[RMDB]
RNA sequence: GGGAACGACUCGAGUAGAGUCGAAAAUGAACGUCUUUGUCUCGCCGCGGAACUGCACCUGGAUCACCGGCUUGUCGUCGCCCUUCGUGAUGACCUUGAAGGGCCAGUGCUUCAUGUCCGACUGCAAGCGCAGUCGGAGGUUCGCCUCCGACUGCGCAAAAGAAACAACAACAACAAC
Reactivity to DMS in 0.01 (KOAc 150mM, MgCl2 10mM, bicine 150mM(pH8.5), 24C), signal-to-noise 2, nucleotides 027 to 126: u010g010a110a090c090g000u010c050u000u000u000g020u010c030u010c040g030c080c070g020c100g020g000a060a110c050u010g020c040a060c060c060u000g020g000a070u000c050a060c060c080g000g030c030u000u020g030u010c020g020u000c130g010c000c090c060u000u020c060g000u000g000a140u000g020a090c110c210u010u020g000a070a060g010g010g000c010c040a030g000u000g000c050u000u010c020a040u000g020u000c010c000g000a100c090u000g010c050a130a140
Reactivity to 2A3 in 0.01 (KOAc 150mM, MgCl2 10mM, bicine 150mM(pH8.5), 24C), signal-to-noise 1, nucleotides 027 to 126: u130g010a050a030c030g000u020c060u000u110u070g080u020c010u020c040g060c030c000g010c040g080g050a060a070c020u050g000c050a020c000c030u020g010g030a030u060c000a000c110c030g020g070c000u010u080g050u050c040g010u020c040g000c000c040c000u040u120c030g020u020g030a120u090g040a120c000c100u020u170g040a010a030g070g010g020c030c000a030g010u020g040c000u020u070c060a070u060g000u000c030c000g040a070c070u080g120c040a090a090
This 177-nucleotide RNA was probed chemically with DMS and 2A3. It was measured as part of the RMDB library OK2TRN. The reactions ran in a buffer of 150 mM KOAc, 10 mM MgCl2 and 150 mM bicine (pH 8.5), at 24 C.